[RMDB]
RNA sequence: GGGAACGACUCGAGUAGAGUCGAAAAUCAGAAAGACAGCAGGCAGCAGCAGGAAGGACGCUGCUUCAGGGGAUUUUGAGACACCAAGAGAAGAUGCCAGCAUCAAGGCAGGGGAGCGAAUGUAUGCGUUAUAUCGUUACUUCGGUAACGAUAUAACAAAAGAAACAACAACAACAAC
Reactivity to 2A3 in 0.01 (KOAc 150mM, MgCl2 10mM, bicine 150mM(pH8.5), 24C), signal-to-noise 4, nucleotides 027 to 126: u080c010a020g090a050a090a000g090a050c030a020g050c010a020g030g020c010a010g000c000a000g000c010a010g090g030a070a040g060g010a020c020g000c030u030g010c000u010u010c020a010g030g000g000g040a050u010u050u090u170g070a070g020a000c030a020c020c030a040a020g050a000g010a120a010g030a020u070g030c030c010a020g030c010a050u070c060a050a040g030g000c020a010g030g010g000g010a040g010c040g050a080a020u120g050u110a060u110g040c030
Reactivity to DMS in 0.01 (KOAc 150mM, MgCl2 10mM, bicine 150mM(pH8.5), 24C), signal-to-noise 9, nucleotides 027 to 126: u000c050a090g000a080a090a100g010a090c090a070g020c070a050g000g010c050a040g010c040a060g020c060a060g010g020a100a110g010g010a130c130g000c030u000g000c030u010u000c070a060g010g010g000g010a090u000u000u000u010g010a100g010a080c090a060c060c040a050a070g000a090g010a060a070g000a070u000g000c040c040a090g000c070a060u000c100a050a090g010g000c040a050g000g010g000g000a070g000c070g000a070a060u000g020u000a040u010g010c210